[RMDB]
RNA sequence: GGGAACGACUCGAGUAGAGUCGAAAAAGCGUUCGGCACGUGCUUGCCAAUUUCUAUCAGAACAAGGCUAUGACGUUAUCAAUGUCCAAGGUGGCAUGGAUGCUUUAGAAUAAGAAAACUCUCUUUGACACUCUUUUCCUUUCGAGGAAAAGAGUGUAAAAGAAACAACAACAACAAC
Reactivity to 2A3 in 0.01 (KOAc 150mM, MgCl2 10mM, bicine 150mM(pH8.5), 24C), signal-to-noise 6, nucleotides 027 to 126: a000g030c040g030u020u010c030g090g040c070a010c020g020u060g090c040u030u020g010c010c000a020a020u050u050u010c100u050a250u180c100a050g020a040a000c050a090a100g020g000c030u050a070u180g020a010c010g040u030u050a100u140c080a080a020u060g030u000c010c010a100a110g170g060u170g060g000c030a020u020g020g000a010u030g000c000u070u040u060a090g070a150a120u180a180a030g090a080a060a030a020c050u060c000u000c000u030u000u040g010
Reactivity to DMS in 0.01 (KOAc 150mM, MgCl2 10mM, bicine 150mM(pH8.5), 24C), signal-to-noise 2, nucleotides 027 to 126: a020g000c030g040u000u000c040g000g000c050a030c020g020u000g010c090u000u010g000c010c020a070a210u030u000u010c090u010a100u020c240a070g020a040a050c250a120a230g010g010c010u000a030u020g000a020c090g000u000u010a100u010c100a100a010u000g000u010c000c050a110a160g000g010u010g000g010c010a030u010g010g000a010u000g000c010u030u000u000a100g020a140a070u030a090a040g000a090a050a040a030c230u000c030u000c010u000u000u000g000